An RNA of 177 nucleotides, treated with 2A3 and read out base by base.
RNA sequence: GGGAACGACUCGAGUAGAGUCGAAAAUCUUCUUCUUCUUCUUCUUCUUCUUAGAUUUCUUUCUCAUUGCCUAUAUCUUUCUUGAUGUGGCACAGAAUAAGUUCAAGAAAGCUGUGGGAGAACAUGGAGAUUCCUCCCUGUUCGCAGGGAGGAAUCUAAAAGAAACAACAACAACAAC
Reactivity to 2A3 in 0.01 (KOAc 150mM, MgCl2 10mM, bicine 150mM(pH8.5), 24C), signal-to-noise 2, nucleotides 027 to 126: u010c000u010u000c000u000u010c000u000u000c000u030u030c000u000u000c030u050u000c020u070u000c000u000u060a100g000a170u120u030u010c000u010u080u000c020u060c040a270u110u180g050c000c010u020a000u000a000u000c040u000u050u000c020u040u000g030a030u000g210u150g120g080c060a040c030a070g190a070a050u140a250a070g070u050u010c000a000a030g000a000a000a000g020c020u010g000u030g020g010g000a010g010a020a060c050a040u030g000g090
Reactivities are given for positions 27 through 126.